An RNA of 177 nucleotides, treated with 2A3 and DMS and read out base by base.
The reactions ran in a buffer of 150 mM KOAc, 10 mM MgCl2 and 150 mM bicine (pH 8.5), at 24 C.
The DMS profile rests on 12,033 reads.
[RMDB]
RNA sequence: GGGAACGACUCGAGUAGAGUCGAAAAGUAAUAGCGCGGCUGAAUUUCCUAUGCGCCGGAUGGGUGUUAAUGUCUGGCCGUUAAAUACCGUUCAGUUUUCGAACCAUACGCAAUAUGGUCACUGGACAACUUACUCAUCUUUCGAGAUGAGUAAGUUAAAAGAAACAACAACAACAAC
Reactivity to 2A3 in 0.01 (KOAc 150mM, MgCl2 10mM, bicine 150mM(pH8.5), 24C), signal-to-noise 6, nucleotides 027 to 126: g030u020a050a190u060a200g030c050g010c020g080g030c030u030g050a140a230u020u030u030c000c000u020a070u100g030c040g000c000c010g060g060a080u120g140g040g050u090g040u170u160a140a080u160g040u070c030u050g050g000c000c010g010u010u070a050a120a030u120a080c050c030g000u000u000c010a010g000u020u020u100u240c060g030a050a030c000c010a000u030a020c120g020c170a050a090u020a010u060g010g000u020c010a000c020u010g010g000a000c000
Reactivity to DMS in 0.01 (KOAc 150mM, MgCl2 10mM, bicine 150mM(pH8.5), 24C), signal-to-noise 8, nucleotides 027 to 126: g000u010a090a090u000a090g020c100g020c040g010g010c010u000g010a080a110u000u000u000c000c020u000a080u010g010c080g030c020c030g010g010a050u000g010g010g020u010g000u010u010a070a090u000g010u000c040u000g010g010c020c020g020u000u000a030a070a080u010a090c150c110g010u000u000c010a020g000u000u000u010u010c200g010a060a050c000c000a010u000a020c100g020c300a070a230u000a010u000g000g000u000c050a070c020u000g000g000a030c030
Source: RMDB library OK2TST, as collected in RNAgym. Values cover nucleotides 27 to 126. DMS adducts were read by reverse transcription with MarathonRT.